[RMDB]
RNA sequence: GGGAACGACUCGAGUAGAGUCGAAAAUGAGACCUCAGAAUUCUAGACCCAAAGCCUGCUUCUGAUCCUGAGCUUGCUUCUGUGGGGACAGCACAGACGCCUCCUAAGUCUGCCUUCCAGAGGUGGAUGCAGUGCCCGUGGACUGUGCACCACCAGGUGACAGUCUACUCUUCGGAGUAGACUGUCAAAAAGAAACAACAACAACAAC
Reactivity to DMS in 0.01 (KOAc 150mM, MgCl2 10mM, bicine 150mM(pH8.5), 24C), signal-to-noise 1, nucleotides 027 to 156: u010g020a160g030a150c040c010u010c050a060g010a140a070u010u020c000u000a010g020a130c010c010c050a100a130a130g010c030c070u000g030c030u010u010c030u000g010a090u020c050c010u000g020a050g020c030u000u030g020c010u000u010c010u010g040u000g010g030g020g010a080c020a090g000c030a070c030a020g030a130c020g050c030c010u000c010c030u010a000a180g060u030c000u000g030c090c010u000u000c080c210a180g000a130g040g020u000g020g010a100u010g030c100a130g050u000g010c000c000c070g010u000g030g000a030c030u010g020u000g000c060a180c030c000a060c000c020a140g000g010
Reactivity to 2A3 in 0.01 (KOAc 150mM, MgCl2 10mM, bicine 150mM(pH8.5), 24C), signal-to-noise 2, nucleotides 027 to 156: u130g000a010g010a050c020c010u040c040a050g100a070a030u160u050c040u050a100g070a160c000c020c060a030a040a020g030c020c010u010g020c030u070u060c030u130g090a140u090c030c010u050g010a000g010c030u040u030g060c010u040u070c010u050g020u050g020g000g020g020a020c040a020g040c020a010c000a000g110a010c040g040c000c000u090c030c000u020a050a040g010u010c010u020g020c000c000u090u090c070c080a110g000a050g130g020u010g000g000a040u060g010c030a020g010u010g090c000c030c010g070u070g020g000a080c010u020g000u040g040c020a000c010c000a000c020c000a030g200g020